[RMDB]
RNA sequence: GGGAACGACUCGAGUAGAGUCGAAAAGAUAUGGACAGAGGGAGAUGUGUAACUACCCACCUCGGAAACGAGAGGUUACCAUCGAAGAACUCUGUCCUAAGUCAAAACGCUUACUUCGGUAAGCGAAGGUUUAACCUUGGUUCGCCAAGGUUAAACCAAAAGAAACAACAACAACAAC
Reactivity to DMS in 0.01 (KOAc 150mM, MgCl2 10mM, bicine 150mM(pH8.5), 24C), signal-to-noise 1, nucleotides 027 to 126: g010a160u000a110u020g000g020a010c000a010g000a020g020g030g000a040g020a020u040g000u010g010u000a000a000c020u000a150c010c000c060a300c210c060u000c010g000g000a240a080a240c010g000a020g010a190g020g000u000u000a020c000c010a000u000c010g020a020a150g010a040a100c050u000c000u000g000u000c000c000u040a000a150g000u000c100a040a050a150a100c010g010c000u020u000a000c000u000u000c170g050g000u000a000a000g020c000g000a090a020